[RMDB]
RNA sequence: GGGAACGACUCGAGUAGAGUCGAAAAGGAUGACAUGUUAACAGAACUCAUGGCGAGAUUCCGUUUCAGUGGUGACUCUGAGAGUGAUGAUGCCACAGCUGGUAGGACUGGUCCUCCAAGACAGGCACACUCCAUCCAUGUUCGCAUGGAUGGAGUGAAAAGAAACAACAACAACAAC
Reactivity to DMS in 0.01 (KOAc 150mM, MgCl2 10mM, bicine 150mM(pH8.5), 24C), signal-to-noise 4, nucleotides 027 to 126: g000g010a050u010g010a070c060a040u010g010u000u000a080a080c070a050g020a090a050c050u010c060a100u010g000g010c090g010a080g000a100u000u000c020c040g020u010u000u000c040a060g030u010g010g010u010g000a130c070u010c030u010g010a130g000a090g010u010g010a080u000g010a180u010g020c000c010a040c110a090g020c050u000g010g010u010a050g020g010a060c050u000g040g010u000c020c080u000c030c020a040a070g000a070c090a060g000g010c140a130
Reactivity to 2A3 in 0.01 (KOAc 150mM, MgCl2 10mM, bicine 150mM(pH8.5), 24C), signal-to-noise 2, nucleotides 027 to 126: g060g010a060u070g030a000c010a040u090g030u090u090a130a020c030a070g030a070a080c040u040c080a060u080g070g000c020g040a090g040a050u080u000c010c000g040u030u050u100c020a030g020u060g080g070u090g040a040c020u020c030u040g070a090g000a020g130u110g020a070u010g000a010u050g000c020c000a020c010a030g010c040u040g130g000u180a030g000g050a020c040u080g040g030u000c000c000u020c030c000a030a000g070a030c050a020g100g000c030a010